[RMDB]
RNA sequence: GGGAACGACUCGAGUAGAGUCGAAAAUACCACAUUGCGACACAUGGAGGGGCGAAGAACACAGAUGAAGAGCACUAUCGUGUGUGUAAACCUACAGAAACAGAUGACGAGUACGUGUACGACGUGGGACAUUGUGAGUUUUCGAACUCACAAUGUCAAAAGAAACAACAACAACAAC
Reactivity to DMS in 0.01 (KOAc 150mM, MgCl2 10mM, bicine 150mM(pH8.5), 24C), signal-to-noise 4, nucleotides 027 to 126: u020a250c030c000a040c120a090u020u010g020c050g020a080c060a040c050a100u000g030g020a120g000g000g010g000c080g020a060a090g000a090a040c060a030c020a050g020a060u020g030a070a080g010a130g010c080a050c050u000a080u000c060g000u000g010u000g000u000g000u000a060a110a110c030c020u000a080c090a080g000a030a060a060c090a080g010a060u010g010a090c090g010a120g020u010a040c090g020u010g000u000a070c080g010a060c100g040u000g000g010
Reactivity to 2A3 in 0.01 (KOAc 150mM, MgCl2 10mM, bicine 150mM(pH8.5), 24C), signal-to-noise 5, nucleotides 027 to 126: u120a010c000c020a010c010a060u020u200g020c040g060a020c020a000c010a090u090g030g060a050g040g040g000g000c070g030a060a050g030a110a010c040a000c010a040g050a070u060g040a100a050g070a040g110c070a030c080u070a080u180c080g040u040g000u010g000u010g030u080a060a040a040c000c010u060a070c010a040g080a100a130a000c030a010g070a130u090g040a050c060g020a000g050u080a040c070g000u020g000u050a060c040g030a010c050g090u060g000g060